[RMDB]
RNA sequence: GGGAACGACUCGAGUAGAGUCGAAAACUCGAACGGUUCGCCGUUCGAGAAAAGCGCGUCAGCGCUACCAUGCAAGCGCAAGCGCGUGCAUCGUAAAUGAAAAAACUUGUGUGUUCGCACACAAGAAUCCUAACUCAUUCUUCGGAAUGAGUUAGGAAAAAGAAACAACAACAACAAC
Reactivity to DMS in 0.01 (KOAc 150mM, MgCl2 10mM, bicine 150mM(pH8.5), 24C), signal-to-noise 3, nucleotides 027 to 126: c000u000c010g000a010a020c000g010g000u000u010c210g020c010c010g000u000u000c000g010a010g000a030a040a070a210g000c000g010c000g030u010c170a300g000c000g010c000u000a060c070c090a100u010g000c140a080a020g000c000g040c040a150a220g020c010g030c000g000u000g000c120a100u000c150g010u000a070a040a090u030g000a010a150a100a040a070a160c010u000u000g010u000g000u010g000u010u020c220g020c000a020c000a010c000a000a000g010a080a070
Reactivity to 2A3 in 0.01 (KOAc 150mM, MgCl2 10mM, bicine 150mM(pH8.5), 24C), signal-to-noise 1, nucleotides 027 to 126: c000u010c000g000a010a000c000g010g050u040u090c140g020c060c020g010u000u000c000g000a000g010a000a060a000a000g030c000g000c000g080u080c130a040g000c000g030c000u000a020c040c070a160u240g090c070a070a010g010c010g000c040a070a110g070c000g000c030g020u040g010c030a080u040c060g180u200a010a080a180u230g050a130a090a030a000a020a070c000u000u010g000u010g000u000g020u050u010c200g030c090a000c000a000c000a000a010g010a020a050